Structure probing data (DMS and 2A3) for a 177-nucleotide construct. For DMS, 13,055 sequencing reads were counted. The 2A3 profile rests on 17,217 reads. For DMS the reverse transcriptase was MarathonRT.
[RMDB]
RNA sequence: GGGAACGACUCGAGUAGAGUCGAAAAGAUAUGGAUGUUUAAGGGAGCUCAGUGGUCGGAAACGACCACGAGCGAGGAUCUUGGGACAUCCUAAGUCAAAAGCAUUGGUAGUUCGCUACCAAUGCAAGUAUCUACCAGAGUUCGCUCUGGUAGAUACAAAAGAAACAACAACAACAAC
Reactivity to DMS in 0.01 (KOAc 150mM, MgCl2 10mM, bicine 150mM(pH8.5), 24C), signal-to-noise 4, nucleotides 027 to 126: g010a030u000a160u010g000g000a010u000g010u000u000u010a020a020g000g000g000a040g030c000u000c000a140g050u000g010g010u000c000g020g000a030a030a070c000g010a010c000c000a000c000g010a000g020c000g000a050g020g000a030u000c000u000u000g020g020g000a020c000a000u000c000c000u000a010a110g000u010c020a100a100a140a160g010c000a000u000u000g010g000u000a010g010u000u020c300g020c010u000a010c000c000a000a000u000g010c000a010a040
Reactivity to 2A3 in 0.01 (KOAc 150mM, MgCl2 10mM, bicine 150mM(pH8.5), 24C), signal-to-noise 4, nucleotides 027 to 126: g010a010u030a020u090g000g000a000u010g040u010u130u130a030a020g030g020g000a060g010c000u010c110a100g040u000g010g010u010c000g000g000a010a020a020c000g000a000c000c000a000c000g000a000g010c000g010a010g040g020a020u000c010u030u060g120g040g120a010c010a010u000c000c000u010a030a000g010u010c020a030a020a070a190g000c000a000u000u000g000g000u010a020g020u060u120c300g020c130u000a000c000c000a000a000u000g000c000a000a010
Values cover nucleotides 27 to 126. The RNA was probed in 150 mM KOAc, 10 mM MgCl2 and 150 mM bicine (pH 8.5) at 24 C.